Chemical mapping of a 177-nucleotide RNA with DMS and 2A3. It was measured as part of the RMDB library OK2TST. DMS (dimethyl sulfate) methylates the pairing face of unpaired adenines and cytosines. Values cover nucleotides 27 to 126. For DMS the reverse transcriptase was MarathonRT. Conditions: 150 mM KOAc, 10 mM MgCl2 and 150 mM bicine (pH 8.5), 24 C.
RNA sequence: GGGAACGACUCGAGUAGAGUCGAAAAUCGGAUAGCAUUUGAGAUGAAACAACACUUGAACACUGGAGGGGGUAGUAUAGAGGAGGCAAAGUUCGUGUACAAGACAAUCAAAUACUCGAAUGAAGUGGGUAAACUAUGUUUUCGAACAUAGUUUACCAAAAGAAACAACAACAACAAC
Reactivity to DMS in 0.01 (KOAc 150mM, MgCl2 10mM, bicine 150mM(pH8.5), 24C), signal-to-noise 8, nucleotides 027 to 126: u010c050g000g000a110u000a050g010c030a080u000u000u010g010a060g000a120u000g010a120a080a100c100a060a090c090a070c070u000u000g000a080a050c070a070c090u000g020g010a080g020g010g000g010g010u010a050g020u000a070u000a070g000a080g010g010a070g010g000c060a040a050a100g010u000u000c060g020u000g010u010a050c080a050a110g010a070c160a060a090u010c100a040a070a110u000a030c010u000c010g000a040a060u010g010a060a110g010u010g020
Reactivity to 2A3 in 0.01 (KOAc 150mM, MgCl2 10mM, bicine 150mM(pH8.5), 24C), signal-to-noise 6, nucleotides 027 to 126: u060c020g040g020a080u070a050g050c030a060u010u030u100g050a060g020a040u090g080a080a070a030c060a020a020c010a020c050u030u060g040a060a010c030a020c080u060g010g040a070g010g010g000g010g010u030a010g020u010a070u040a060g040a010g030g000a010g010g000c010a040a040a010g020u050u050c020g010u020g000u030a020c010a030a030g060a030c020a000a030u070c010a020a030a040u080a060c010u020c010g020a020a020u090g010a080a020g100u170g090